The record gives the reactivity of an RNA of 177 nucleotides to DMS. The DMS profile rests on 1,126 reads. The RNA was probed in 150 mM KOAc, 10 mM MgCl2 and 150 mM bicine (pH 8.5) at 24 C.
RNA sequence: GGGAACGACUCGAGUAGAGUCGAAAAAAGGGCGGCGGGCCGGCAUCGAAACGCGGCCUUGCUCGCGGCAGGGGGCGGGCGGAAUGUUCCGGAAUGGCCCGGAACGGCCUGGUUCGGUCAGCUUGGAGUACCCUACCUAGUUCGCUAGGUAGGGUACAAAAGAAACAACAACAACAAC
Reactivity to DMS in 0.01 (KOAc 150mM, MgCl2 10mM, bicine 150mM(pH8.5), 24C), signal-to-noise 1, nucleotides 027 to 126: a130a030g010g000g030c040g010g010c040g000g000g000c040c080g010g010c050a050u000c100g000a040a110a180c150g010c040g020g000c000c020u000u000g040c010u010c180g000c070g040g000c120a100g000g010g020g000g020c100g000g000g010c070g010g000a090a110u020g010u000u000c000c000g010g000a100a160u020g010g010c130c000c000g010g000a030a020c010g020g000c070c010u000g010g000u000u000c060g000g000u000c100a040g000c110u000u000g010g000a300
DMS adducts were read by reverse transcription with MarathonRT.